[RMDB]
RNA sequence: GGGAACGACUCGAGUAGAGUCGAAAAAGAAGGGUUCGACGGCGUAAAGCUCUAUCGAAAAUAAACCUUACAAGCAUAUUUUUGGGGACUGUCCCUGACAAUGGUGAGCAAGCUCAGCUCGUACUGAUCAUUACUCCGGGUUCGCCCGGAGUAAUGAAAAAGAAACAACAACAACAAC
Reactivity to 2A3 in 0.01 (KOAc 150mM, MgCl2 10mM, bicine 150mM(pH8.5), 24C), signal-to-noise 3, nucleotides 027 to 126: a000g150a030a000g030g010g000u000u020c010g000a010c030g000g000c010g050u100a140a190a130g000c020u020c040u040a030u030c000g080a000a020a000a050u190a100a080a050c000c010u100u070a090c050a100a030g060c090a020u060a060u100u040u020u100u140g010g010g010g010a010c060u110g120u090c020c010c000u010g000a030c020a040a020u060g030g050u130g000a020g010c030a060a030g050c010u020c140a020g010c020u030c020g000u030a130c030u040g060a030
Reactivity to DMS in 0.01 (KOAc 150mM, MgCl2 10mM, bicine 150mM(pH8.5), 24C), signal-to-noise 2, nucleotides 027 to 126: a070g000a040a040g000g010g010u000u000c010g000a050c300g000g000c000g000u020a110a120a160g000c020u010c050u030a100u020c020g000a010a000a050a160u000a060a050a060c080c010u000u010a100c130a120a080g000c040a060u010a000u000u000u010u000u000g030g000g020g010a200c230u050g010u020c000c000c000u000g010a030c130a050a040u010g020g000u000g000a000g000c010a090a070g000c060u020c100a070g000c020u020c010g010u020a100c050u010g030a290